Conditions: 150 mM KOAc, 10 mM MgCl2 and 150 mM bicine (pH 8.5), 24 C. This 207-nucleotide RNA was probed chemically with 2A3 and DMS. 2A3 adducts were read by reverse transcription with SuperScript II with manganese. Values are in units of 0.01, from 0 to 300, in steps of 10.
RNA sequence: GGGAACGACUCGAGUAGAGUCGAAAAUGUCACUUGAUGUGAGUACAUGGUGGAAACACUCAUGUCACUUGAUGUGAGUACAUGGUGGAAACACUAUGUACUCACAAGCAGUAAGUGACUGCUAAUGUACUCACAAGCAGUAAGUGACUGCUAGAGACGAUUCCACGUAUUUCGAUACGUGGAAUCGAAAAGAAACAACAACAACAAC
Reactivity to 2A3 in 0.01 (KOAc 150mM, MgCl2 10mM, bicine 150mM(pH8.5), 24C), signal-to-noise 3, nucleotides 027 to 156: u150g010u000c000a000c000u040u050g050a030u060g080u000g000a000g000u000a000c010a010u040g040g000u020g010g100a100a080a020c030a020c020u040c030a030u100g010u010c010a010c000u010u030g030a020u060g040u000g000a000g000u000a000c000a000u000g000g020u000g020g020a040a010a020c000a010c000u000a000u010g000u000a000c000u000c020a000c000a000a000g030c000a040g100u270a170a000g000u000g000a050c000u000g000c000u110a170a060u010g000u000a000c000u000c000a010c000a000a000g000c000a080g080u270a110a000g000u000g020a000c010u000g030c040u070a030g000a010g000a060
Reactivity to DMS in 0.01 (KOAc 150mM, MgCl2 10mM, bicine 150mM(pH8.5), 24C), signal-to-noise 1, nucleotides 027 to 156: u000g000u000c000a030c020u000u020g030a130u000g000u010g020a030g040u010a020c000a020u000g050g000u010g040g020a260a110a220c020a020c080u010c070a060u000g010u000c080a010c030u050u000g020a170u000g050u010g000a020g060u000a000c000a000u010g040g030u000g020g000a300a150a190c010a000c010u020a010u020g040u010a000c000u000c020a010c000a010a050g060c080a160g000u000a040a030g050u000g020a100c030u000g000c070u000a130a050u000g000u000a000c000u000c000a050c020a020a070g070c150a090g010u000a100a010g000u000g010a110c010u000g000c010u010a130g000a180g060a260